[RMDB]
RNA sequence: GGGAACGACUCGAGUAGAGUCGAAAAGAGCGACACCGCCGUAACGGUCGACCUCGGCAGCGAGAUGCCAGUGAAAAUGCACUUCGAGACCGGCGGCGGUGACAUUAACGUCGAAGCGAUGGUCGCGCCGCGGAUUCAGGGGGACUAACCGAUGAGCUCAAUUCGCAAAGUUCGCUUUGCGAAUUGAAAAAGAAACAACAACAACAAC
Reactivity to 2A3 in 0.01 (KOAc 150mM, MgCl2 10mM, bicine 150mM(pH8.5), 24C), signal-to-noise 1, nucleotides 027 to 156: g030a060g040c010g030a000c000a000c020c000g040c020c020g020u030a170a070c000g000g010u010c000g020a060c080c040u100c130g000g000c030a020g080c070g150a020g050a140u060g000c040c020a070g080u110g080a170a080a000a000u170g010c110a020c100u080u120c130g130a070g000a050c010c000g010g000c000g000g000c000g020g000u000g000a010c000a030u070u060a070a060c020g000u010c030g030a080a030g010c000g060a050u070g020g020u040c010g000c030g040c110c030g010c020g000g000a000u000u190c000a110g030g000g020g020g000a000c030u020a070a020c010c090g000a080u110g020a020g000c010
This 207-nucleotide RNA was probed chemically with 2A3. The 2A3 profile rests on 637 reads. Conditions: 150 mM KOAc, 10 mM MgCl2 and 150 mM bicine (pH 8.5), 24 C. Reactivities are given for positions 27 through 156.